Conditions: 150 mM KOAc, 10 mM MgCl2 and 150 mM bicine (pH 8.5), 24 C. Chemical mapping of a 177-nucleotide RNA with 2A3 and DMS. For DMS the reverse transcriptase was MarathonRT. Values cover nucleotides 27 to 126. In probing experiments dimethyl sulfate is read out at A N1 and C N3, which are open when not base-paired.
RNA sequence: GGGAACGACUCGAGUAGAGUCGAAAAGUGGGUGGAUCGCAAGGUCAGGAGUUCGAGACCAGCCUGGCCAAGAUGGUGAAACCCCAUCUCUACUAAACAUAAAAAAUUAGCUGGACGUGGUGGCAGGCACGUUGAUGUAGUUCGCUACAUCAACGUGAAAAGAAACAACAACAACAAC
Reactivity to 2A3 in 0.01 (KOAc 150mM, MgCl2 10mM, bicine 150mM(pH8.5), 24C), signal-to-noise 3, nucleotides 027 to 126: g120u240g010g040g010u020g000g010a020u010c010g020c190a080a050g000g000u000c010a000g020g000a040g050u150u290c120g060a060g040a110c060c000a010g060c010c000u020g000g000c000c020a010a020g060a060u180g080g060u010g010a030a010a000c000c000c010c010a040u010c000u020c010u030a110c050u080a040a160a060c130a170u300a070a140a060a010a060a120u130u100a030g010c040u040g040g000a040c040g040u030g020g030u030g030g040c040a020g010g060
Reactivity to DMS in 0.01 (KOAc 150mM, MgCl2 10mM, bicine 150mM(pH8.5), 24C), signal-to-noise 4, nucleotides 027 to 126: g020u010g000g020g050u000g000g000a070u000c020g000c070a100a150g020g010u000c030a040g010g000a060g020u000u000c080g010a100g010a060c050c030a070g010c000c010u000g010g020c010c020a010a090g000a040u000g010g020u010g000a140a060a060c040c010c000c020a070u000c020u000c010u000a080c070u010a010a030a050c170a080u030a010a020a030a020a040a040u000u000a070g010c040u000g010g010a050c060g010u000g000g010u000g010g020c050a030g020g010